An RNA of 177 nucleotides, treated with 2A3 and DMS and read out base by base. Source: RMDB library OK2TRN, as collected in RNAgym. The reactions ran in a buffer of 150 mM KOAc, 10 mM MgCl2 and 150 mM bicine (pH 8.5), at 24 C. For 2A3 the reverse transcriptase was SuperScript II with manganese.

RNA sequence: GGGAACGACUCGAGUAGAGUCGAAAAGUCGCCUUUCUUCGCGGUGCUUAAUGCCUGGGCGAAGAUCCCGGGCAACUCCUGAAUACGGCCCCAGCCCAUCUGGCCGCCGUUCAGCGCCUGCUGGUCGGAGUUCAUCCACUUUCGAGUGGAUGAACUCAAAAGAAACAACAACAACAAC
Reactivity to 2A3 in 0.01 (KOAc 150mM, MgCl2 10mM, bicine 150mM(pH8.5), 24C), signal-to-noise 1, nucleotides 027 to 126: g020u030c030g050c020c000u030u110u000c080u080u100c050g030c040g080g010u120g010c020u130u180a110a010u170g000c000c010u030g040g090g000c030g060a060a050g100a150u060c050c070c020g050g000g000c010a030a040c000u100c030c010u060g040a130a060u110a070c030g030g000c000c000c010c000a060g010c020c030c000a060u060c080u040g000g040c110c040g000c030c000g040u010u080c030a000g080c000g030c020c040u150g080c040u050g010g090u030c010g080
Reactivity to DMS in 0.01 (KOAc 150mM, MgCl2 10mM, bicine 150mM(pH8.5), 24C), signal-to-noise 1, nucleotides 027 to 126: g020u010c080g000c020c030u000u000u010c080u020u000c210g020c040g010g010u010g020c020u000u020a050a140u000g010c010c040u010g000g020g000c020g010a100a070g020a070u020c010c000c000g030g010g000c020a030a020c040u000c020c030u030g000a050a080u020a110c090g020g010c010c160c050c020a030g020c120c150c210a120u000c020u010g010g000c130c090g020c010c000g010u000u000c040a080g020c110g030c090c040u000g010c010u000g010g000u010c100g020